The data come from the RNA Mapping Database (RMDB), library M2RFPK. Structure probing data (DMS and 2A3) for a 207-nucleotide construct. 2A3 adducts were read by reverse transcription with SuperScript II with manganese. Conditions: 150 mM KOAc, 10 mM MgCl2 and 150 mM bicine (pH 8.5), 24 C. DMS (dimethyl sulfate) methylates the pairing face of unpaired adenines and cytosines. For 2A3, 2,960 sequencing reads were counted. For DMS the reverse transcriptase was MarathonRT.
RNA sequence: GGGAACGACUCGAGUAGAGUCGAAAAAGACGUGUACGCACGUCACACCGUGGGGGCGGUGUAAAACAAACAUUAAGCCGCCAGCGUCCCGGAACAAGGCAUUUUCCGAUUCUCCGGGGGUUGCAAAAAAACUGAACUUGGUUCGCCAAGUUCAGAAGACAAGUAAAUUGUUCGCAAUUUACUUGUCAAAAGAAACAACAACAACAAC
Reactivity to DMS in 0.01 (KOAc 150mM, MgCl2 10mM, bicine 150mM(pH8.5), 24C), signal-to-noise 2, nucleotides 027 to 156: a060g000a000c020g040u020g000u000a080c210g060c030a050c030g010u000c010a090c090a120c050c070g010u030g060g000g010g020g030c050g030g030u000g000u000a020a050a180a220c070a220a130a090c050a120u000u000a100a230g030c020c000g010c010c030a070g010c030g010u000c000c000c000g030g000a060a080c030a070a100g020g000c110a120u010u010u000u010c010c010g000a200u000u000c090u000c000c020g040g010g030g010g020u000u000g000c010a000a000a060a050a070a090a170c010u000g000a000a010c000u000u000g000g000u000u000c270g000c000c000a000a010g000u000u000c030a000g000a010a090
Reactivity to 2A3 in 0.01 (KOAc 150mM, MgCl2 10mM, bicine 150mM(pH8.5), 24C), signal-to-noise 3, nucleotides 027 to 156: a000g010a010c020g000u000g010u040a030c220g030c100a000c000g020u000c000a010c010a020c010c010g050u110g010g030g000g010g000c000g000g000u030g030u080a070a080a020a010c080a040a140a010c020a030u100u110a100a010g020c020c020g030c030c010a020g060c020g050u060c000c000c000g000g010a040a030c080a060a040g060g000c080a080u060u040u090u160c020c010g060a070u130u030c030u010c040c000g000g020g000g010g020u090u080g000c020a000a020a000a000a000a070a130c000u000g000a000a000c000u000u000g010g020u040u030c080g000c100c010a000a000g000u000u010c000a000g000a020a000